[RMDB]
RNA sequence: GGGAACGACUCGAGUAGAGUCGAAAAGUCGCCCUCGGCGCCGCUUGGGCCAGUGUUUCGGGGCCGGCCCUGACAAGCAGCCCGAGGAGGGCCUCGAACGACUCAAACCUGGACUUCUGCGAUUGUCGUCCACAGCGUGGUUCGCCACGCUGUGGACAAAAGAAACAACAACAACAAC
Reactivity to 2A3 in 0.01 (KOAc 150mM, MgCl2 10mM, bicine 150mM(pH8.5), 24C), signal-to-noise 2, nucleotides 027 to 126: g020u010c030g070c060c000c000u000c000g050g000c100g020c010c000g000c010u000u050g000g010g020c010c020a080g030u080g040u110u070u130c070g000g050g080g010c040c000g000g080c010c000c000u000g100a030c040a070a010g000c020a000g040c000c000c000g000a010g020g070a100g030g090g000c000c020u010c010g060a080a030c030g040a030c000u020c000a130a070a040c010c010u040g070g020a050c030u040u000c000u040g060c050g110a130u050u130g070u090c010
An RNA of 177 nucleotides, treated with 2A3 and read out base by base. The data come from the RNA Mapping Database (RMDB), library RFM100. 2A3 adducts were read by reverse transcription with SuperScript II with manganese. High 2A3 reactivity points to a flexible backbone, as in loops and unpaired stretches. Conditions: 150 mM KOAc, 10 mM MgCl2 and 150 mM bicine (pH 8.5), 24 C.